[RMDB]
RNA sequence: GGGAACGACUCGAGUAGAGUCGAAAAUUAGCCCCCCUUCGUACCGAUUCUGUUUUCGUCUCAAGCUCUUCAUUACUACAGCGCAAGUCUACCAUUACCACACCCACACACAGAUAUUACGGCUAAUAAUGGUUAUCCCUUUCGAGGGAUAACCAUUAAAAGAAACAACAACAACAAC
Reactivity to 2A3 in 0.01 (KOAc 150mM, MgCl2 10mM, bicine 150mM(pH8.5), 24C), signal-to-noise 3, nucleotides 027 to 126: u060u040a020g010c000c000c020c000c000c010u010u050c030g000u010a040c030c000g070a090u020u090c030u070g070u030u040u040u040c040g000u010c010u010c070a040a050g020c010u030c000u120u040c030a090u070u080a070c030u040a020c030a040g000c000g000c040a030a050g010u000c000u020a060c040c030a070u030u070a030c020c000a020c020a010c010c020c000a030c000a000c000a000c010a010g060a050u040a030u070u140a100c010g000g020c000u010a010a000u030
Reactivity to DMS in 0.01 (KOAc 150mM, MgCl2 10mM, bicine 150mM(pH8.5), 24C), signal-to-noise 2, nucleotides 027 to 126: u020u070a050g010c010c000c000c020c000c000u000u000c000g050u000a080c080c000g020a090u020u030c060u060g040u000u030u000u030c000g020u000c000u010c030a080a130g000c020u000c000u000u030c040a030u000u020a060c010u000a070c070a010g010c090g000c010a080a100g040u000c000u060a110c040c030a090u010u000a120c120c050a010c000a060c050c010c070a050c030a050c030a050c090a090g000a020u030a000u020u000a150c190g010g000c010u000a080a110u010